[RMDB]
RNA sequence: GGGAACGACUCGAGUAGAGUCGAAAACACGGUAAAGGAGACCAGUGGAACAGGAUGGCGCUUGAGCCAGACGUGUUGCCGUGCUUGCCUUUCAUCCCGGCUGACGAGCAGCUCGGGAAUUGAUACCCCCAGGUCCAUAUUUCGAUAUGGACCUGGGAAAAGAAACAACAACAACAAC
Reactivity to DMS in 0.01 (KOAc 150mM, MgCl2 10mM, bicine 150mM(pH8.5), 24C), signal-to-noise 1, nucleotides 027 to 126: c020a030c040g000g010u000a000a080a130g000g000a140g000a080c030c020a190g000u000g040g010a130a080c120a100g000g020a170u000g010g010c020g020c300u000u000g030a150g000c000c000a000g000a210c050g000u010g000u020u000g000c020c000g010u000g010c110u020u000g020c040c030u000u000u000c070a140u000c000c000c020g000g000c010u010g000a300c300g020a190g040c010a010g000c010u000c030g020g000g000a030a000u000u000g010a050u000a110c120c090
Reactivity to 2A3 in 0.01 (KOAc 150mM, MgCl2 10mM, bicine 150mM(pH8.5), 24C), signal-to-noise 1, nucleotides 027 to 126: c030a020c010g000g050u160a020a110a190g140g120a120g160a070c000c010a030g050u110g130g040a060a020c010a000g090g000a040u020g020g030c060g000c160u180u220g080a020g000c000c000a020g000a010c040g050u100g080u090u060g070c010c020g010u020g020c000u020u090g060c000c000u000u090u040c010a060u000c030c000c000g000g000c010u040g030a160c030g060a020g170c010a000g020c130u170c100g000g000g060a000a020u090u100g000a010u090a060c030c010

Description: An RNA of 177 nucleotides, treated with DMS and 2A3 and read out base by base. DMS adducts were read by reverse transcription with MarathonRT. Values cover nucleotides 27 to 126. The reactions ran in a buffer of 150 mM KOAc, 10 mM MgCl2 and 150 mM bicine (pH 8.5), at 24 C. For 2A3, 926 sequencing reads were counted.